[RMDB]
RNA sequence: GGGAACGACUCGAGUAGAGUCGAAAAAGUAACGCGUGACCCACGUGAGCAGGGUCAAGGUAGGAUUUUUUUUUUCUACCAGUUCACGAUUUCGAGUUCACGUGUUACAACCGCACAAGAACUCAGAGGGUAGGAUCUAGUUCGCUAGAUCCUACCCAAAAGAAACAACAACAACAAC
Reactivity to 2A3 in 0.01 (KOAc 150mM, MgCl2 10mM, bicine 150mM(pH8.5), 24C), signal-to-noise 2, nucleotides 027 to 126: a000g010u000a010a000c010g000c000g000u000g000a000c070c000c000a030c000g000u050g020a010g010c110a080g120g130g110u160c130a170a140g000g000u000a000g000g010a070u010u000u010u010u010u000u010u010u000u010c000u000a000c000c010a000g020u000u000c020a030c060g030a100u040u150u290c190g010a090g050u070u000c000a000c030g000u000g000u000u000a010c000a000a000c010c040g120c000a060c020a050a120g100a080a020c050u060c080a070g050a050

Chemical mapping of a 177-nucleotide RNA with 2A3. The reactions ran in a buffer of 150 mM KOAc, 10 mM MgCl2 and 150 mM bicine (pH 8.5), at 24 C. The 2A3 profile rests on 713 reads. It was measured as part of the RMDB library OK1LIB.